Structure probing data (2A3 and DMS) for a 177-nucleotide construct. For 2A3, 727 sequencing reads were counted. Values cover nucleotides 27 to 126. The reactions ran in a buffer of 150 mM KOAc, 10 mM MgCl2 and 150 mM bicine (pH 8.5), at 24 C.

[RMDB]
RNA sequence: GGGAACGACUCGAGUAGAGUCGAAAAGGCUCUGGAACCCCAAGGGAAACCACUUGGUUUCCCACUGACUCCACUGGAUGUGCCUCAAGACAGGGUCAGUGGCACGAGAGAUGGAACGGGAAGCAAGCUACUCCCGUGAGUUCGCUCACGGGAGUAGAAAAGAAACAACAACAACAAC
Reactivity to 2A3 in 0.01 (KOAc 150mM, MgCl2 10mM, bicine 150mM(pH8.5), 24C), signal-to-noise 1, nucleotides 027 to 126: g020g000c000u060c000u090g130g060a150a130c010c000c080c000a100a100g020g060g030a000a000a040c060c030a140c300u300u300g000g000u020u020u020c020c010c000a010c030u040g020a020c010u000c020c000a020c010u010g050g000a030u170g040u050g000c000c020u000c040a060a140g060a110c080a120g230g020g100u050c010a010g050u040g020g090c020a000c000g000a040g000a020g000a140u040g010g000a050a070c020g060g000g060a020a000g060c070a080a000g060
Reactivity to DMS in 0.01 (KOAc 150mM, MgCl2 10mM, bicine 150mM(pH8.5), 24C), signal-to-noise 2, nucleotides 027 to 126: g010g000c050u010c010u010g000g030a170a170c090c010c000c080a220a090g010g000g000a000a000a000c010c000a300c300u030u030g030g030u030u000u000c000c010c000a030c050u020g050a110c080u010c010c010a050c050u000g000g030a120u000g010u020g000c010c010u000c030a090a140g000a110c040a150g040g010g030u010c020a090g030u000g000g030c020a030c050g030a300g000a070g010a160u000g000g030a010a090c100g010g000g000a080a100g030c090a040a050g010